[RMDB]
RNA sequence: GGGAACGACUCGAGUAGAGUCGAAAAAUAAAUAGUGCGUGGACGCACCCACGCAUUCAUGCGUAGGCAGUUGUUCGCAUUAGAACAGCUUAGCCUGUACUAAGCGAACAACAAGUACAACAAAAAACAAACCAACUAUCUUCGGAUAGUUGGUUUGAAAAGAAACAACAACAACAAC
Reactivity to DMS in 0.01 (KOAc 150mM, MgCl2 10mM, bicine 150mM(pH8.5), 24C), signal-to-noise 3, nucleotides 027 to 126: a080u040a050a060a070u000a040g010u000g000c000g030u000g010g010a140c200g000c250a120c160c010c000a020c010g000c000a010u000u000c200a080u010g020c090g020u000a070g010g000c120a120g010u000u000g010u000u000c000g010c000a100u000u000a010g000a070a010c000a010g010c000u010u000a050g030c140c000u000g010u000a050c010u000a020a020g000c000g000a010a000c000a010a010c000a040a170g010u010a090c120a020a050c100a010a030a110a050a050a080
Reactivity to 2A3 in 0.01 (KOAc 150mM, MgCl2 10mM, bicine 150mM(pH8.5), 24C), signal-to-noise 1, nucleotides 027 to 126: a000u220a030a080a010u200a010g010u030g010c020g010u040g010g010a070c080g000c100a030c000c000c000a010c000g000c000a010u020u020c000a020u110g050c000g050u070a100g180g000c080a030g040u000u000g020u010u010c010g010c120a190u040u020a020g000a030a000c010a000g000c000u090u030a020g040c030c000u000g000u000a010c000u000a010a020g010c000g000a000a000c010a000a020c000a000a000g010u030a050c110a170a000c030a010a170a000a010a010a010
An RNA of 177 nucleotides, treated with DMS and 2A3 and read out base by base. For DMS, 2,104 sequencing reads were counted. The data come from the RNA Mapping Database (RMDB), library M2PK90. Conditions: 150 mM KOAc, 10 mM MgCl2 and 150 mM bicine (pH 8.5), 24 C.